[RMDB]
RNA sequence: GGGAACGACUCGAGUAGAGUCGAAAAGUGAUUUGACGAUUUCUUAUAACCGAGCGCGUCAAGGAGCAAUUACACAAGAAAUCACAGAAAUUGUAGCUGGUGCAGCUGCAUUAGAAUAAUCUGGUCACCAGUCACUUUUAUUCGUAAAAGUGACUGGAAAAGAAACAACAACAACAAC
Reactivity to DMS in 0.01 (KOAc 150mM, MgCl2 10mM, bicine 150mM(pH8.5), 24C), signal-to-noise 2, nucleotides 027 to 126: g010u010g020a160u010u010u010g000a060c090g000a040u000u000u010c010u020u020a120u020a100a150c170c090g010a080g010c300g010c060g000u000c020a020a080g010g010a270g020c070a050a090u000u000a070c120a100c160a040a080g000a060a060a010u000c060a080c040a040g000a030a050a070u000u010g020u000a000g050c000u000g020g030u000g020c050a040g000c030u000g000c000a040u000u000a060g010a070a110u010a080a080u000c010u000g000g000u000c150a100
Reactivity to 2A3 in 0.01 (KOAc 150mM, MgCl2 10mM, bicine 150mM(pH8.5), 24C), signal-to-noise 2, nucleotides 027 to 126: g000u010g010a070u020u000u000g030a020c040g000a000u050u240u060c020u040u240a150u040a270a040c060c080g010a040g030c070g010c000g050u000c040a040a050g090g010a020g000c040a070a110u110u110a090c070a040c040a080a050g110a070a040a020u130c060a060c010a140g040a010a120a010u060u010g000u000a030g010c000u020g080g230u300g140c060a010g000c030u010g000c010a000u010u050a040g050a040a080u150a080a070u060c000u030g040g030u100c020a030
An RNA of 177 nucleotides, treated with DMS and 2A3 and read out base by base. For 2A3, 1,292 sequencing reads were counted. Reactivities are given for positions 27 through 126. 2A3 adducts were read by reverse transcription with SuperScript II with manganese. Source: RMDB library OK2TST, as collected in RNAgym.